This 177-nucleotide RNA was probed chemically with 2A3 and DMS.
Reactivities are given for positions 27 through 126.
2A3 adducts were read by reverse transcription with SuperScript II with manganese.
RNA sequence: GGGAACGACUCGAGUAGAGUCGAAAACGGAACACAGUGAGUGGACGGAACAAAUCCCCUUCCCACCUCCCCACUGUCCACUCACUGUCUUCCUAAUAGGAAAUAUAAAUCGGGGGUGGGAAGGGGAAUACCAGCUAGGAUUCGUCCUAGCUGGUAUAAAAGAAACAACAACAACAAC
Reactivity to 2A3 in 0.01 (KOAc 150mM, MgCl2 10mM, bicine 150mM(pH8.5), 24C), signal-to-noise 5, nucleotides 027 to 126: c040g010g000a000a000c010a010c000a010g000u010g000a000g010u000g010g010a010c030g020g040a080a020c040a070a110a110u130c000c000c000c000u000u000c000c000c000a000c000c000u040c060c070c020c020a060c030u030g000u000c000c010a000c000u000c000a000c010u000g000u000c000u010u000c000c000u040a080a030u110a090g100g060a040a110a010u300a050u110a050a140a060u240c140g010g000g000g000g000u000g000g000g000a000a000g000g000g000g000a000
Reactivity to DMS in 0.01 (KOAc 150mM, MgCl2 10mM, bicine 150mM(pH8.5), 24C), signal-to-noise 2, nucleotides 027 to 126: c050g000g030a000a010c090a000c020a010g020u010g070a040g070u020g000g030a040c010g050g000a150a110c250a050a140a100u000c000c000c000c000u010u000c010c000c000a010c010c030u000c010c010c210c110a040c020u000g000u000c010c010a020c000u000c000a020c000u010g000u000c060u000u020c000c000u010a070a050u000a120g000g020a060a090a090u050a140u010a030a110a100u080c220g000g040g000g040g030u000g000g030g000a000a000g020g000g000g000a150